[RMDB]
RNA sequence: GGGAACGACUCGAGUAGAGUCGAAAAGAAAGAAAGAAAGAAUCGAUCCCCAUCCCAGCUUCCUUCCAGCCCUUGAUGUUUUAGUACGCACAUAGGCUAGAGAGAGGUUGGGGAUGGGGAAAGAUAAGAUUCGGGUAUUUUUCGAAAUACCCGAAUCAAAAGAAACAACAACAACAAC
Reactivity to 2A3 in 0.01 (KOAc 150mM, MgCl2 10mM, bicine 150mM(pH8.5), 24C), signal-to-noise 4, nucleotides 027 to 126: g100a010a070a020g150a040a110a000g110a030a080a010g100a020a040u000c010g000a030u010c000c000c010c000a000u010c000c010c000a000g020c020u000u000c020c010u060u020c020c010a010g000c000c010c010u070u040g120a240u030g300u080u070u060u040a150g080u140a070c170g010c010a010c010a030u010a000g000g010c000u020a010g000a000g010a000g010a000g030g060u020u060g110g010g000g010a000u000g000g000g000g000a000a000a000g000a000u000a010a000
Reactivity to DMS in 0.01 (KOAc 150mM, MgCl2 10mM, bicine 150mM(pH8.5), 24C), signal-to-noise 2, nucleotides 027 to 126: g000a120a130a000g020a070a030a140g000a090a120a200g000a100a030u000c010g000a300u010c000c000c000c010a000u000c000c000c010a050g000c000u000u000c000c030u040u020c000c010a000g010c010c010c080u000u000g000a150u020g030u000u020u020u050a210g060u090a100c240g010c030a020c010a030u010a150g000g010c000u000a070g000a000g000a050g000a000g000g010u000u000g080g030g020g000a020u000g010g020g000g000a000a000a040g010a030u000a050a100